An RNA of 207 nucleotides, treated with DMS and 2A3 and read out base by base. The 2A3 profile rests on 1,693 reads. For DMS the reverse transcriptase was MarathonRT. It was measured as part of the RMDB library M2RFPK. The reactions ran in a buffer of 150 mM KOAc, 10 mM MgCl2 and 150 mM bicine (pH 8.5), at 24 C. Reactivities are given for positions 27 through 156.
RNA sequence: GGGAACGACUCGAGUAGAGUCGAAAAAGCACUGGUACGAUACGUCGUACCAGUGCAGUCGUUGGGCUGGAACGCAAUUAAAUACAUGUGUGACGUGUAUUUGCGAACGACGUAAUUAUUUUUCAAAAUCACGCUAUCGUGUUCGCACGAUAGCGAAUCGUUCAUAGUACUUCGGUACUAUGAACGAAAAAGAAACAACAACAACAAC
Reactivity to DMS in 0.01 (KOAc 150mM, MgCl2 10mM, bicine 150mM(pH8.5), 24C), signal-to-noise 2, nucleotides 027 to 156: a200g020c000a000c010u010g000g010u000a020c000g040a090u000a080c270g050u000c010g070u000a010c000c000a010g020u010g070c000a000g000u000c020g010u000u000g010g030g040c130u000g000g030a110a140c000g020c000a040a280u000u010a060a000a040u000a010c020a020u000g020u010g060u000g020a110c090g030u000g030u000a000u000u000u010g010c100g040a030a170c050g010a130c020g020u000a040a060u000u000a060u000u000u000u020u000c070a050a010a150a150u000c140a120c010g000c000u000a000u000c000g000u000g040u010u010c300g030c010a050c000g000a040u000a000g020c010g020a020a020
Reactivity to 2A3 in 0.01 (KOAc 150mM, MgCl2 10mM, bicine 150mM(pH8.5), 24C), signal-to-noise 3, nucleotides 027 to 156: a020g040c020a020c010u020g020g000u010a000c000g000a040u010a040c220g120u000c000g000u010a000c000c000a000g000u010g000c000a010g000u000c010g000u020u020g090g000g030c070u110g090g060a070a030c040g010c020a020a070u110u120a150a030a010u020a000c000a020u040g070u060g170u260g240a060c050g000u000g000u000a020u010u040u060g010c010g030a030a010c000g020a000c020g010u040a090a040u080u160a130u030u110u000u040u070c080a070a050a030a070u120c080a120c080g010c000u000a000u000c000g000u000g010u050u010c170g030c070a000c000g000a030u000a000g000c000g000a000a020